An RNA of 177 nucleotides, treated with 2A3 and DMS and read out base by base.
DMS adducts were read by reverse transcription with MarathonRT.
The data come from the RNA Mapping Database (RMDB), library OK1LIB.
For 2A3, 4,497 sequencing reads were counted.
The RNA was probed in 150 mM KOAc, 10 mM MgCl2 and 150 mM bicine (pH 8.5) at 24 C.

RNA sequence: GGGAACGACUCGAGUAGAGUCGAAAAGACGCCUGUGUGGCGAAGCGAGCAAUGGAAUAAGCCGCAAUAGAAGAUGAGAUGGAAGCGGCAAGAUAGAAUGCUCGCAAGAAGAUCCAUCUCACAGAGACGUAAUAGUCGAGUUCGCUCGACUAUUACGAAAAGAAACAACAACAACAAC
Reactivity to 2A3 in 0.01 (KOAc 150mM, MgCl2 10mM, bicine 150mM(pH8.5), 24C), signal-to-noise 4, nucleotides 027 to 126: g110a030c020g040c000c000u210g060u100g160u300g250g010c000g020a060a000g000c000g000a010g000c000a020a130u200g010g120a170a080u110a120a070g000c020c000g000c010a020a030u140a080g120a200a030g130a210u040g000a000g000a020u020g000g010a110a000g000c000g000g000c010a000a000g040a010u100a030g100a110a050u070g000c020u020c000g000c000a000a020g030a000a060g020a010u020c000c000a020u010c000u010c000a010c050a000g050a000g010a030
Reactivity to DMS in 0.01 (KOAc 150mM, MgCl2 10mM, bicine 150mM(pH8.5), 24C), signal-to-noise 3, nucleotides 027 to 126: g000a210c070g000c000c000u040g010u030g050u030g020g140c050g020a120a130g000c000g000a000g000c000a050a070u010g020g010a200a190u020a130a110g010c000c010g030c000a260a110u020a030g000a110a120g030a200u020g000a020g000a000u000g000g030a030a210g020c010g000g000c000a000a030g010a180u050a080g000a110a100u010g020c030u000c000g000c020a060a120g000a050a090g000a110u000c010c010a000u030c000u000c000a010c120a150g000a090g010a260